[RMDB]
RNA sequence: GGGAACGACUCGAGUAGAGUCGAAAAAAGAGCACUGGUGGAAGGUCAAAGAUGCCUUGGGGAAUGUCGGCUAUAUACCCAGCAACUAUGUCAAGCCGAAGGCUCUUCUGGGCCUGGAGCGCUAUGAGAAACAUAGAACGUUCGCGUUCUAUGUUUCAAAAGAAACAACAACAACAAC
Reactivity to DMS in 0.01 (KOAc 150mM, MgCl2 10mM, bicine 150mM(pH8.5), 24C), signal-to-noise 3, nucleotides 027 to 126: a080a040g020a080g010c030a070c050u000g010g020u010g000g020a080a040g010g020u000c060a050a090a120g010a110u000g000c040c050u010u010g010g020g000g010a090a050u000g000u000c040g010g000c010u010a080u000a080u010a160c030c020c020a100g030c100a040a090c080u010a060u000g010u010c080a060a130g010c000c000g010a270a020g000g000c020u000c010u010u010c200u010g030g000g000c020c020u000g000g000a140g000c030g010c100u000a040u000g020a260
Reactivity to 2A3 in 0.01 (KOAc 150mM, MgCl2 10mM, bicine 150mM(pH8.5), 24C), signal-to-noise 2, nucleotides 027 to 126: a010a020g070a000g000c030a020c120u070g020g020u060g070g070a050a050g030g010u030c030a100a110a060g050a080u070g030c040c040u080u090g040g020g010g010a090a000u060g070u040c010g000g000c010u010a030u000a010u050a200c000c000c010a000g050c030a010a060c040u150a050u200g070u160c080a030a040g000c000c000g040a010a010g000g000c000u010c000u160u130c120u160g020g020g020c000c050u010g010g000a040g020c090g000c020u070a100u180g050a070